This 177-nucleotide RNA was probed chemically with 2A3 and DMS. For DMS, 1,715 sequencing reads were counted. It was measured as part of the RMDB library OK2TST.
RNA sequence: GGGAACGACUCGAGUAGAGUCGAAAAAUUGUCAGCUUGUUGUUCAAUAUCAUCAGAAAAGUGGGUCUCGUUCAAGUAUGAACCAUUUGAUACAAGCCAACAUUUGGGCAGUGAUGUUCUCCCAGUACGCCUUCAACUAAUUCGUUAGUUGAAGGCGAAAAGAAACAACAACAACAAC
Reactivity to 2A3 in 0.01 (KOAc 150mM, MgCl2 10mM, bicine 150mM(pH8.5), 24C), signal-to-noise 2, nucleotides 027 to 126: a000u130u090g020u020c000a030g000c040u000u030g020u060u020g060u060u020c030a030a000u020a010u150c020a030u020c020a010g170a110a140a090a040g030u040g000g060g060u010c040u010c060g040u120u100c060a110a080g120u100a100u170g010a010a040c000c010a020u030u010u040g010a010u030a040c010a040a000g040c000c000a020a020c010a020u030u030u040g000g000g000c020a010g030u030g080a070u030g020u010u040c010u010c000c010c010a010g030u030a020
Reactivity to DMS in 0.01 (KOAc 150mM, MgCl2 10mM, bicine 150mM(pH8.5), 24C), signal-to-noise 2, nucleotides 027 to 126: a040u010u000g010u010c080a110g030c080u000u000g040u000u010g020u020u020c070a080a140u000a050u010c080a080u000c210a130g020a090a020a040a040g000u000g010g010g000u000c040u000c050g010u000u010c090a080a110g010u020a000u000g000a040a050c090c020a020u000u010u010g020a030u000a030c030a040a050g020c190c040a070a030c030a000u000u000u000g000g030g000c010a030g000u000g000a120u000g010u000u000c060u000c000c010c040a180g020u000a100